[RMDB]
RNA sequence: GGGAACGACUCGAGUAGAGUCGAAAAUCUCCGUCUGAGGUUAAAUAGAAGAGCUUAAUGAGACUAGCUGAAUGGAAGCCUGUUACCGGGCUGAUGUUUAUGCGAAAUGCUAAUACGGUGACUACGCUCGUAGAUAUUCAAGUGCCGAUAUUUCUGGCCACAUCCUUAAGUUCGCUUAAGGAUGUGGAAAAGAAACAACAACAACAAC
Reactivity to DMS in 0.01 (KOAc 150mM, MgCl2 10mM, bicine 150mM(pH8.5), 24C), signal-to-noise 2, nucleotides 027 to 156: u000c000u000c000c080g050u030c050u000g000a040g030g010u000u000a080a070a110u010a130g040a120a090g000a080g020c030u000u000a070a120u020g000a110g010a140c040u000a120g010c000u000g000a040a050u010g020g020a250a140g020c000c010u000g030u000u000a160c220c050g040g040g060c010u000g000a180u030g000u000u000u000a030u010g030c060g010a070a090a090u010g030c060u000a080a160u000a090c060g030g020u000g020a110c060u000a070c050g010c050u010c070g030u000a060g000a130u000a100u000u000c020a010a150g000u000g000c000c020g020a170u000a120u000u000u000c020u020g010g010
Reactivity to 2A3 in 0.01 (KOAc 150mM, MgCl2 10mM, bicine 150mM(pH8.5), 24C), signal-to-noise 4, nucleotides 027 to 156: u020c020u020c020c010g040u010c040u080g070a060g040g000u110u140a090a110a070u150a170g070a180a020g030a040g020c040u110u170a050a050u220g040a040g010a090c010u030a020g000c010u000g020a020a010u040g020g030a030a000g000c000c010u040g040u110u050a040c030c010g000g000g010c010u020g010a010u040g020u000u100u040a140u170g000c010g040a080a020a060u150g000c060u120a060a020u030a050c000g030g000u000g010a010c010u030a010c030g040c040u060c050g020u010a020g050a140u080a150u130u100c120a130a050g020u040g090c030c010g010a020u010a070u130u050u000c030u020g030g040
Notes: Chemical mapping of a 207-nucleotide RNA with DMS and 2A3. The RNA was probed in 150 mM KOAc, 10 mM MgCl2 and 150 mM bicine (pH 8.5) at 24 C. For DMS, 3,232 sequencing reads were counted. For DMS the reverse transcriptase was MarathonRT. It was measured as part of the RMDB library RSTRND.